[RMDB]
RNA sequence: GGGAACGACUCGAGUAGAGUCGAAAAGCACCGAUUCUCUGUCGUCACUGUGAAGAUGCAUGGUGUGCGCGGGUUUGCCCGGUCAAUGCCAUUACCCUGACCAAUAACGCGGUCGAAUUGGAUGAAACGCACUGCAUCAUUUCGAUGAUGCAGUGCGAAAAGAAACAACAACAACAAC
Reactivity to DMS in 0.01 (KOAc 150mM, MgCl2 10mM, bicine 150mM(pH8.5), 24C), signal-to-noise 1, nucleotides 027 to 126: g000c040a100c010c060g020a080u000u000c010u000c030u010g030u020c030g000u000c020a060c080u000g000u010g000a090a070g000a090u000g000c130a050u000g000g030u000g000u010g020c100g020c060g010g000g030u000u010u000g040c060c020c040g000g000u000c070a100a050u030g000c020c010a020u000u000a060c080c020c000u020g000a140c230c010a030a070u000a110a060c230g030c260g000g030u000c140g000a020a100u000u000g000g030a190u020g000a010a120a100
Reactivity to 2A3 in 0.01 (KOAc 150mM, MgCl2 10mM, bicine 150mM(pH8.5), 24C), signal-to-noise 1, nucleotides 027 to 126: g060c040a000c080c010g030a010u050u000c050u020c010u050g210u190c030g010u050c020a000c050u030g020u000g110a080a010g100a030u150g060c080a010u040g000g010u020g020u060g040c070g000c020g020g000g000u040u110u120g170c000c040c000g000g040u020c040a020a140u120g000c010c000a020u050u040a080c020c010c030u030g000a020c000c020a020a060u090a050a030c060g000c070g060g030u000c020g000a050a020u070u060g040g090a070u080g050a030a080a040